[RMDB]
RNA sequence: GGGAACGACUCGAGUAGAGUCGAAAAUGAUGACAAAAUCAAGGCUUGUUUCUCUACAUUCGCAGUUGCCGCCUAAGAGCUUUCGCCCUGCCAGGCUUGAGAGCUAAUGCUGCAGAAUCCUUCCUUGCUACUGCGCGCAAUUCGUUGCGCGCAGUAGAAAAGAAACAACAACAACAAC
Reactivity to 2A3 in 0.01 (KOAc 150mM, MgCl2 10mM, bicine 150mM(pH8.5), 24C), signal-to-noise 2, nucleotides 027 to 126: u210g050a020u060g030a000c070a010a140a000a140u020c040a060a090g030g070c130u080u050g000u130u080u070c060u080c010u020a070c000a120u020u110c050g020c020a020g020u020u000g080c000c010g030c000c010u180a070a040g010a040g010c000u130u000u020c040g020c000c000c000u110g030c060c010a000g000g030c000u030u090g090a050g010a020g060c000u050a050a020u060g000c000u020g000c020a070g010a000a000u010c000c030u110u080c000c000u010u000g000